The record gives the reactivity of an RNA of 207 nucleotides to 2A3. Reactivities are rounded to 0.1 and cut off at 0 and 3.

RNA sequence: GGGAACGACUCGAGUAGAGUCGAAAAGGGUGACGAUCAGCCGCGUGAGAGUACCAUGGAUACUCCUGGCUGUGCUAGCUCGCGGGAAUUGGGUUCUGCGCCGCAUGUUGCGUCCGUUCGUCAGGUACUCUCCGAUGCUGAACCCGUACACGCUAUCCCUAACCUUUGACUUCGGUCAAAGGUUAGGAAAAGAAACAACAACAACAAC
Reactivity to 2A3 in 0.01 (KOAc 150mM, MgCl2 10mM, bicine 150mM(pH8.5), 24C), signal-to-noise 2, nucleotides 027 to 156: g060g010g000u020g000a020c000g020a030u000c010a010g010c000c030g010c010g030u300g060a010g000a010g000u000a000c000c040a140u140g030g030a010u020a100c050u070c010c020u060g110g000c010u010g010u010g010c000u000a000g030c010u010c030g020c090g000g060g050a060a190u170u170g040g000g010u120u100c100u180g010c010g000c010c010g000c030a040u090g020u080u030g040c020g010u000c010c010g000u120u220c070g170u210c110a070g000g010u010a020c020u000c000u010c000c000g000a000u000g000c000u000g000a010a000c030c010c000g020u040a060c050a000c030g170c020u050a050u150c010
For 2A3 the reverse transcriptase was SuperScript II with manganese. For 2A3, 1,393 sequencing reads were counted.